Chemical mapping of a 207-nucleotide RNA with 2A3 and DMS. For DMS the reverse transcriptase was MarathonRT. It was measured as part of the RMDB library M2RFPK. For 2A3, 3,146 sequencing reads were counted.

RNA sequence: GGGAACGACUCGAGUAGAGUCGAAAAUAAAGGUCGAAAGUAUUGCUAUAGUUAAGGUUGCGCUUGCCUAUUUAGGCAUACUUCUCAGGAUGGCGCGUUGCAGUCCAACAAGAUCCAGGGACUGUACAAAACAGGCUCGUGUUCGCACGAGCCUGAACAAUUCCAGUUAGUUCGCUAACUGGAAUUGAAAAGAAACAACAACAACAAC
Reactivity to 2A3 in 0.01 (KOAc 150mM, MgCl2 10mM, bicine 150mM(pH8.5), 24C), signal-to-noise 4, nucleotides 027 to 156: u140a010a060a030g050g020u080c040g050a070a030a000g030u050a040u110u250g000c030u070a040u090a180g080u150u130a090a030g010g020u050u100g020c050g020c050u040u110g000c010c000u070a150u090u170u200a030g000g000c000a000u010a030c010u060u020c050u020c120a010g090g030a080u060g010g020c020g000c030g030u040u040g000c000a010g000u000c000c000a020a050c020a180a090g050a100u040c030c030a010g030g000g000a000c000u000g000u010a040c060a000a090a020a030c010a000g000g000c010u000c020g020u020g020u060u070c160g000c090a000c010g000a000g000c000c000u000g000a000a000
Reactivity to DMS in 0.01 (KOAc 150mM, MgCl2 10mM, bicine 150mM(pH8.5), 24C), signal-to-noise 3, nucleotides 027 to 156: u010a040a100a070g010g030u000c020g000a080a060a100g010u010a050u000u010g010c000u000a080u000a120g030u000u010a070a090g010g010u000u000g000c070g010c060u000u010g010c030c010u010a160u000u000u010a060g030g000c000a070u000a010c040u010u000c020u000c060a170g030g010a080u000g010g010c050g050c040g030u000u000g010c010a050g020u000c010c010a060a160c050a060a130g000a080u000c040c020a130g010g010g010a020c020u000g020u000a080c080a040a070a100a170c010a030g000g020c000u000c000g060u000g020u000u020c300g000c010a040c000g010a020g030c000c000u000g010a020a050